[RMDB]
RNA sequence: GGGAACGACUCGAGUAGAGUCGAAAAGAUAUGGAGACCACUUUUGACGUGCGGUAAACCCUCGGAAACGAGGGUGCCAGCACGAUAAGUGGCUCCUAAGUCUAAAACUGUCUGUUCGCAGACAGAAGAACAAUGACACGUUCGCGUGUCAUUGUUCAAAAGAAACAACAACAACAAC
Reactivity to DMS in 0.01 (KOAc 150mM, MgCl2 10mM, bicine 150mM(pH8.5), 24C), signal-to-noise 1, nucleotides 027 to 126: g000a000u000a300u020g000g010a000g000a140c020c010a000c000u000u000u000u000g020a100c080g040u000g000c010g000g010u040a030a100a030c000c000c000u030c000g000g000a110a060a160c010g000a020g000g030g020u000g000c060c000a120g020c000a010c000g020a050u010a000a000g030u000g000g000c000u020c000c000u000a000a100g000u000c010u010a020a060a060a170c000u010g000u000c000u000g000u000u020c160g010c000a000g000a010c000a000g010a100a090
Reactivity to 2A3 in 0.01 (KOAc 150mM, MgCl2 10mM, bicine 150mM(pH8.5), 24C), signal-to-noise 1, nucleotides 027 to 126: g010a000u110a020u110g030g030a010g160a300c040c000a050c020u110u020u120u200g300a130c040g000u000g000c010g000g030u070a230a160a120c020c000c000u000c010g010g000a050a120a050c040g000a010g000g010g000u010g000c010c000a000g000c000a000c010g000a000u000a000a000g000u000g000g000c040u000c000c000u000a020a010g030u030c010u020a040a050a110a250c020u000g000u000c000u030g130u110u140c300g020c120a000g000a010c000a020g000a000a000